Conditions: 150 mM KOAc, 10 mM MgCl2 and 150 mM bicine (pH 8.5), 24 C. Structure probing data (DMS and 2A3) for a 177-nucleotide construct. For 2A3 the reverse transcriptase was SuperScript II with manganese. The DMS profile rests on 5,442 reads.
[RMDB]
RNA sequence: GGGAACGACUCGAGUAGAGUCGAAAACGGGCACCGGCCAGCGCCAGCAGCAACUGGUGCAGGCCGGCCAGCGAGUGCGCCGGCAGGAACAGGUCGCAAUAGGGCAGCGCCGCCGCCAUCGAACCGGAGAUGAAAACAUCUUCGGAUGUUUUCAUCUAAAAGAAACAACAACAACAAC
Reactivity to DMS in 0.01 (KOAc 150mM, MgCl2 10mM, bicine 150mM(pH8.5), 24C), signal-to-noise 4, nucleotides 027 to 126: c060g010g000g010c110a240c020c000g000g000c010c000a080g030c000g010c020c010a000g000c080a150g020c300a250a170c010u000g000g010u000g030c000a020g020g000c000c010g010g000c090c070a070g000c030g010a080g020u010g000c030g010c170c010g000g000c030a080g010g000a080a140c140a080g010g010u030c060g020c100a120a140u000a080g010g000g010c040a090g000c160g000c030c010g000c130c010g000c010c020a070u000c090g000a090a070c020c020g000g020
Reactivity to 2A3 in 0.01 (KOAc 150mM, MgCl2 10mM, bicine 150mM(pH8.5), 24C), signal-to-noise 3, nucleotides 027 to 126: c010g030g020g020c020a030c030c020g000g000c000c000a010g000c000g010c000c000a010g030c020a040g010c020a030a140c010u010g000g000u000g000c020a010g000g040c020c000g000g000c000c000a000g010c020g040a070g030u060g000c050g000c000c010g030g020c010a060g080g060a100a080c050a070g000g090u080c020g020c100a010a080u150a190g060g010g030c010a030g020c030g010c000c000g000c000c000g000c020c000a060u080c040g020a030a030c010c020g010g060